[RMDB]
The data come from the RNA Mapping Database (RMDB), library OK1LIB. The record gives the reactivity of an RNA of 177 nucleotides to DMS and 2A3. The 2A3 profile rests on 2,936 reads. For 2A3 the reverse transcriptase was SuperScript II with manganese. For DMS, 4,256 sequencing reads were counted. The reactions ran in a buffer of 150 mM KOAc, 10 mM MgCl2 and 150 mM bicine (pH 8.5), at 24 C. Reactivities are given for positions 27 through 126.
RNA sequence: GGGAACGACUCGAGUAGAGUCGAAAAUGUCGGAGCCUCAGCACCAGCAGCGGCUAGGGGAGAUCCAGCACAUGAGCCAAGCCUGCCUCCUGUCCCUGCUGCCCGUGCCCCGGGACGUCCUGGAGACAUGAUAGACCCCAUUCGUGGGGUCUAUCAUAAAAGAAACAACAACAACAAC
Reactivity to DMS in 0.01 (KOAc 150mM, MgCl2 10mM, bicine 150mM(pH8.5), 24C), signal-to-noise 3, nucleotides 027 to 126: u050g010u000c080g010g000a090g000c030c020u000c150a110g040c050a120c110c020a080g000c040a050g020c120g000g000c030u010a050g010g020g010g000a070g000a090u000c080c020a040g040c100a070c140a080u040g000a120g000c030c060a040a210g000c080c010u020g000c090c010u010c010c010u000g000u020c040c070c010u000g030c010u000g020c040c030c190g020u010g000c040c020c010c050g030g020g010a070c040g010u000c030c010u000g000g030a040g000a100c080
Reactivity to 2A3 in 0.01 (KOAc 150mM, MgCl2 10mM, bicine 150mM(pH8.5), 24C), signal-to-noise 3, nucleotides 027 to 126: u220g020u080c040g020g030a040g050c020c000u060c040a010g010c030a040c030c010a000g030c020a010g020c030g060g020c030u080a040g020g000g020g010a060g000a090u070c050c020a000g000c040a070c010a090u140g090a030g030c030c020a070a030g020c000c020u030g020c010c010u020c010c010u040g080u110c010c010c000u020g000c010u020g020c010c010c020g030u040g000c010c000c010c000g010g000g000a050c030g060u040c000c000u030g050g040a080g020a020c040